[RMDB]
RNA sequence: GGGAACGACUCGAGUAGAGUCGAAAAGCUCGGAGACGAGCAAGGCUGACAAAACGCUGUCCCAACCUCCACGUGGUGUCGGCUGGAUAAUGCUGCAUUAUGUUGCAUUUAUCAACUGGGAAACAAAAGGGUGAUGGAUGUUCGCAUCCAUCACCCUAAAAGAAACAACAACAACAAC
Reactivity to 2A3 in 0.01 (KOAc 150mM, MgCl2 10mM, bicine 150mM(pH8.5), 24C), signal-to-noise 2, nucleotides 027 to 126: g000c000u000c010g080g050a100g000a090c000g000a000g000c000a000a080g010g110c000u000g000a020c010a020a150a020a010c110g060c080u040g030u050c000c000c010a000a120c000c000u060c020c000a070c050g050u040g000g000u000g000u030c000g010g010c030u010g020g000a040u020a050a040u030g020c000u010g000c000a050u020u090a160u300g010u040u030g000c000a000u040u100u120a090u080c000a030a080c000u100g050g050g030a090a040a020c040a070a110a070